[RMDB]
RNA sequence: GGGAACGACUCGAGUAGAGUCGAAAAUACGCGAGGUUCGCCUCGCGUAAAAGAGGAGCGUAAACGUGAGCGUACGUAGAGCUGUACAUCGUUCCUACACGAAUGCACAUGGUUUCGACCAUGUGAAUCGCCACUCAGUCUUCGGACUGAGUGGCGAAAAAGAAACAACAACAACAAC
Reactivity to 2A3 in 0.01 (KOAc 150mM, MgCl2 10mM, bicine 150mM(pH8.5), 24C), signal-to-noise 1, nucleotides 027 to 126: u020a000c000g020c010g000a000g000g020u040u020c100g060c100c000u000c000g000c010g000u000a000a000a000a020g100a020g010g020a020g010c040g050u110a010a000a170c050g020u030g020a090g110c060g020u040a030c040g020u060a060g050a060g140c030u050g010u080a070c010a040u010c020g000u010u020c000c010u030a050c000a000c080g170a110a020u180g030c000a000c030a020u000g000g060u020u080u110c270g100a040c000c000a000u010g000u000g000a010a020
Reactivity to DMS in 0.01 (KOAc 150mM, MgCl2 10mM, bicine 150mM(pH8.5), 24C), signal-to-noise 1, nucleotides 027 to 126: u010a000c010g030c020g030a050g020g070u000u000c300g030c020c000u000c000g000c000g010u000a010a000a010a050g020a120g050g040a060g000c020g000u000a110a130a020c040g020u000g010a170g020c300g050u020a070c060g000u000a040g020a210g030c000u050g020u030a080c080a070u020c010g010u000u000c020c010u000a080c300a150c050g000a050a030u000g000c010a000c000a010u000g000g000u000u000u000c120g000a020c000c000a000u000g010u010g000a010a050

Overview
The data come from the RNA Mapping Database (RMDB), library M2PK50. The record gives the reactivity of an RNA of 177 nucleotides to 2A3 and DMS. The 2A3 profile rests on 1,379 reads. DMS adducts were read by reverse transcription with MarathonRT. For 2A3 the reverse transcriptase was SuperScript II with manganese. Reactivities are given for positions 27 through 126.